[RMDB]
This 207-nucleotide RNA was probed chemically with 2A3.
RNA sequence: GGGAACGACUCGAGUAGAGUCGAAAAGUGAGAUCUCGUGUUCACGUGUGUGAGAGAGUGUACUCGAGAUCUCUCACGUGUGUGAUCGAACGAACGUACACGUGAACACUCUCGAGUUCGUGUACGAGAACUCUCGAGUGUGUGAACGUGUGUACACCCUACGAGAUUCCUUCGGGAAUCUCGUAGGAAAAGAAACAACAACAACAAC
Reactivity to 2A3 in 0.01 (KOAc 150mM, MgCl2 10mM, bicine 150mM(pH8.5), 24C), signal-to-noise 2, nucleotides 027 to 156: g080u040g000a010g000a040u010c010u010c030g000u020g020u020u070c000a000c030g090u160g030u100g020u140g180a140g000a020g000a010g050u000g020u040a010c020u030c020g030a020g000a070u000c010u040c000u000c000a070c080g070u150g010u020g000u010g090a160u120c080g070a080a120c040g020a070a020c100g040u050a000c000a000c000g000u000g030a050a000c010a000c000u040c000u010c020g000a000g000u020u090c060g000u070g080u200a110c110g070a030g000a220a020c010u030c000u000c140g000a000g000u010g000u000g000u020g040a040a010c020g000u010g010u010g020u070a010c010a020c020
2A3 adducts were read by reverse transcription with SuperScript II with manganese.
It was measured as part of the RMDB library OK3TST.